[RMDB]
RNA sequence: GGGAACGACUCGAGUAGAGUCGAAAAACUUACCUGGCAGGGGAGAUACCAUGAUCACGAAGGUGGUUUUCCCAGGGCGAGGCUUAUCCAUUGCACUCCGGAUGUGCUGACCCCUGCGAUUUCCCCACGGAGUUCAUCUUUUCGAAGAUGAACUCCGAAAAGAAACAACAACAACAAC
Reactivity to 2A3 in 0.01 (KOAc 150mM, MgCl2 10mM, bicine 150mM(pH8.5), 24C), signal-to-noise 4, nucleotides 027 to 126: a000c060u150u110a080c010c010u030g120g010c070a070g030g000g030g040a090g020a050u100a120c000c020a060u090g050a090u120c070a020c150g100a090a020g070g010u030g000g030u010u000u040u020c050c060c000a010g000g000g000c010g000a000g000g010c000u080u110a000u000c010c030a050u070u280g120c110a070c130u080c050c060g000g000a000u000g020u030g030c010u050g000a010c000c000c000c000u000g000c000g020a010u020u010u020c010c000c000c010a010
Reactivity to DMS in 0.01 (KOAc 150mM, MgCl2 10mM, bicine 150mM(pH8.5), 24C), signal-to-noise 2, nucleotides 027 to 126: a070c070u010u010a150c000c030u000g020g000c160a100g040g000g040g020a090g000a080u000a100c080c130a100u020g000a080u010c180a040c150g000a190a100g040g030u000g020g000u000u000u090u070c010c130c050a050g050g000g000c000g010a300g000g000c010u000u000a020u010c020c010a090u000u100g030c070a070c120u050c090c220g000g050a030u010g010u000g000c010u000g020a300c300c000c000c040u000g010c270g000a080u000u000u000c000c000c000c130a120
An RNA of 177 nucleotides, treated with 2A3 and DMS and read out base by base.
The DMS profile rests on 1,583 reads.
DMS adducts were read by reverse transcription with MarathonRT.
The 2A3 profile rests on 2,455 reads.
The RNA was probed in 150 mM KOAc, 10 mM MgCl2 and 150 mM bicine (pH 8.5) at 24 C.